An RNA of 177 nucleotides, treated with DMS and 2A3 and read out base by base.

RNA sequence: GGGAACGACUCGAGUAGAGUCGAAAAAGGGCUGUUCGACUCCACGCGGAAAUGUCGAAGGAUGAUGUCCACCACGCCGUGCUGUCACGUUCUCGGUACCCUCGAUUUCCGUCUCUUCUUGCAUGCGCAACGCACGAUAGUUCGCUAUCGUGCGUUGAAAAGAAACAACAACAACAAC
Reactivity to DMS in 0.01 (KOAc 150mM, MgCl2 10mM, bicine 150mM(pH8.5), 24C), signal-to-noise 1, nucleotides 027 to 126: a030g020g020g040c010u000g010u020u000c020g000a060c020u010c040c030a090c170g000c080g010g000a040a090a070u000g000u000c030g000a060a080g010g010a080u000g010a100u010g030u000c020c000a160c060c090a050c080g000c060c030g000u000g020c060u000g030u020c070a060c020g010u000u000c020u000c060g010g010u010a080c060c020c010u000c020g020a060u010u000u010c030c030g000u000c060u010c050u020u000c020u000u000g030c060a060u000g000c130g010
Reactivity to 2A3 in 0.01 (KOAc 150mM, MgCl2 10mM, bicine 150mM(pH8.5), 24C), signal-to-noise 1, nucleotides 027 to 126: a010g080g010g000c050u070g040u030u030c050g030a030c030u060c020c000a010c070g110c050g070g120a100a160a000u240g020u060c000g010a020a050g050g000a030u120g030a030u100g100u110c000c010a010c030c000a050c060g110c070c060g000u050g020c050u090g030u040c020a020c070g050u080u000c070u000c000g020g020u040a120c020c010c000u000c020g050a080u090u000u000c000c000g000u020c010u030c010u120u080c040u020u090g100c080a100u090g040c020g020
Overview: The data come from the RNA Mapping Database (RMDB), library RFMREP.